This 207-nucleotide RNA was probed chemically with DMS and 2A3. The DMS profile rests on 13,457 reads. For 2A3, 3,945 sequencing reads were counted. High DMS reactivity at an A or C suggests that its Watson-Crick edge is free. DMS adducts were read by reverse transcription with MarathonRT. Reactivities are given for positions 27 through 156.
[RMDB]
RNA sequence: GGGAACGACUCGAGUAGAGUCGAAAAAAGGUUGAACCAGCCACUUGGGACAUGUACAGGUAUCGAGAGGUGUUGAAAAAGAGGUAGUUUCCUCCGUAGAGUUGAAACUGGACAGCGGUUGGUGUUGACGAUGGAAUGAUGUCGUUAGUCACCUGAAAACAUUAUCUUUAUUCGUAAAGAUAAUGUUAAAAGAAACAACAACAACAAC
Reactivity to DMS in 0.01 (KOAc 150mM, MgCl2 10mM, bicine 150mM(pH8.5), 24C), signal-to-noise 4, nucleotides 027 to 156: a060a060g010g010u000u000g010a100a110c030c010a100g010c050c020a070c080u000u000g000g000g010a080c050a060u010g010u000a090c060a080g010g030u000a050u000c060g000a140g010a080g010g030u000g020u000u000g010a060a060a040a070a070g010a050g020g010u010a100g020u010u000u000c010c010u000c010c050g020u000a130g010a120g010u010u010g010a050a040a070c040u010g020g020a070c040a070g000c010g020g020u010u000g010g040u000g000u010u000g010a040c040g020a060u000g000g000a130a090u010g010a130u010g010u000c020g010u010u000a060g000u000c030a060c020c010u000g000a130a110
Reactivity to 2A3 in 0.01 (KOAc 150mM, MgCl2 10mM, bicine 150mM(pH8.5), 24C), signal-to-noise 5, nucleotides 027 to 156: a000a010g050g000u030u030g030a070a030c020c010a010g030c030c020a050c070u060u060g030g000g020a030c030a070u090g030u080a030c030a070g030g040u080a060u150c090g020a050g010a020g070g030u050g050u070u080g090a090a040a020a010a010g050a020g020g030u050a040g040u040u040u020c010c000u000c020c010g050u100a030g010a010g060u030u060g060a040a030a030c030u020g020g050a010c020a020g010c030g050g020u050u070g000g010u010g000u020u050g010a020c030g020a020u030g020g040a190a070u090g050a070u210g040u020c000g000u010u010a030g020u060c030a040c030c000u030g030a090a150